[RMDB]
RNA sequence: GGGAACGACUCGAGUAGAGUCGAAAAGAUUCACUUCAAUCCAUGUAUGUUGGUGUGGGUUGGGGUGGAAUUUAGUUCAAAUUCUACUCCAAUCCACCUCAACACAUGUGGAUUGAUGUAAAUCCGACUAAAAGGACAAGCGUUCGCGCUUGUCCAAUCAUAGUCGAGCGUUCGCGCUCGACUAUGAAAAAGAAACAACAACAACAAC
Reactivity to 2A3 in 0.01 (KOAc 150mM, MgCl2 10mM, bicine 150mM(pH8.5), 24C), signal-to-noise 1, nucleotides 027 to 156: g000a010u050u020c030a010c020u020u010c010a030a000u020c000c000a000u010g000u020a020u000g000u000u000g000g020u010g000u000g030g010g000u000u000g000g010g010g000u020g020g000a000a010u010u010u030a130g100u120u210c060a000a000a000u000u000c010u000a010c000u000c000c000a000a000u000c000c000a000c000c000u010c000a000a000c010a000c010a000u020g000u000g010g000a000u000u000g000a000u000g010u010a010a000a010u000c020c010g060a050c100u100a060a040a050a190g000g050a000c010a000a000g050c010g020u080u150c230g040c020g030c100u020u040g000u020c040c020a000a020